Conditions: 150 mM KOAc, 10 mM MgCl2 and 150 mM bicine (pH 8.5), 24 C. The record gives the reactivity of an RNA of 177 nucleotides to DMS and 2A3.
[RMDB]
RNA sequence: GGGAACGACUCGAGUAGAGUCGAAAAAGCCAUCUUCCAAUGUACGGUAAUAGUAGUUCAUGUCUGCGUCUUCCAAGACAAAAGCAGCAUUGAUAAGUGCAGUGAAUGAUUCUGGAGGUAAUGACAAGGAUUAUAGCGCAUUCGUGCGCUAUAAUCCAAAAGAAACAACAACAACAAC
Reactivity to DMS in 0.01 (KOAc 150mM, MgCl2 10mM, bicine 150mM(pH8.5), 24C), signal-to-noise 2, nucleotides 027 to 126: a070g000c060c040a070u010c000u000u000c000c060a060a050u000g000u000a060c120g000g000u000a030a090u030a080g030u000a040g020u000u000c010a070u040g000u040c020u000g000c210g040u000c000u020u000c050c160a070a090g010a010c040a070a070a150a130g020c030a000g050c060a000u020u020g000a090u060a150a090g000u000g000c000a070g040u000g010a080a160u030g000a150u010u020c000u000g030g010a000g000g000u000a110a090u000g000a150c180a070a140
Reactivity to 2A3 in 0.01 (KOAc 150mM, MgCl2 10mM, bicine 150mM(pH8.5), 24C), signal-to-noise 4, nucleotides 027 to 126: a000g040c000c030a060u000c050u020u030c020c010a100a050u090g020u030a040c050g080g020u120a100a110u100a170g210u040a040g030u000u070c080a070u080g060u000c000u020g050c030g010u000c000u180u080c010c000a050a040g010a000c000a010a120a000a030g000c020a000g000c020a010u000u120g110a080u210a300a000g000u000g010c060a000g000u020g080a090a060u140g040a140u140u020c040u070g040g000a010g000g000u050a140a050u010g010a020c070a070a090
High 2A3 reactivity points to a flexible backbone, as in loops and unpaired stretches. Source: RMDB library OK1LIB, as collected in RNAgym.